[RMDB]
RNA sequence: GGGAACGACUCGAGUAGAGUCGAAAAACAGAGUCCAGACCAGCUCGACCUGUGAGCAACGAACGGCCCUGAGACUCGCAUACCCCAAUACCGGUAGUGGCCGUGAAGGGCAAAGAAAUGUGUUCUGAGGCGAUCCCAGCAUCUAAGCUGCGACUGGCAAUAGCCGAGAUUUCGAUCUCGGCUAUUGAAAAGAAACAACAACAACAAC
Reactivity to 2A3 in 0.01 (KOAc 150mM, MgCl2 10mM, bicine 150mM(pH8.5), 24C), signal-to-noise 2, nucleotides 027 to 156: a020c060a000g020a020g070u030c020c000a020g000a080c000c030a020g030c000u010c030g110a130c050c080u130g060u110g060a040g070c050a070a040c120g150a070a010c060g060g000c080c030c020u080g030a110g030a080c030u020c010g000c000a070u170a110c010c050c000c060a020a090u050a200c050c050g040g010u050a070g120u060g150g010c020c000g040u040g030a040a060g000g000g000c030a090a000a000g070a050a210a010u130g070u010g060u130u000c020u020g010a070g000g040c010g060a020u020c000c030c000a010g020c000a030u060c030u080a080a000g060c000u110g040c040g090a100c000u000g050g000
Reactivity to DMS in 0.01 (KOAc 150mM, MgCl2 10mM, bicine 150mM(pH8.5), 24C), signal-to-noise 2, nucleotides 027 to 156: a110c030a170g010a020g000u000c020c000a080g000a080c020c000a170g030c010u000c030g000a090c150c060u030g000u000g020a100g050c010a080a070c030g000a050a050c000g000g000c040c030c040u000g010a230g000a060c010u000c010g020c090a140u000a070c030c010c010c000a070a140u000a070c010c040g020g000u000a080g010u000g040g030c040c030g050u000g020a100a020g000g010g030c010a060a060a140g010a060a100a050u010g030u000g000u000u000c020u010g000a100g010g020c020g030a130u000c010c010c030a210g020c030a110u010c040u000a090a290g050c020u000g000c020g010a230c000u000g020g010
An RNA of 207 nucleotides, treated with 2A3 and DMS and read out base by base. The 2A3 profile rests on 895 reads. It was measured as part of the RMDB library OK3TST. Values are in units of 0.01, from 0 to 300, in steps of 10. The RNA was probed in 150 mM KOAc, 10 mM MgCl2 and 150 mM bicine (pH 8.5) at 24 C. For 2A3 the reverse transcriptase was SuperScript II with manganese. For DMS the reverse transcriptase was MarathonRT.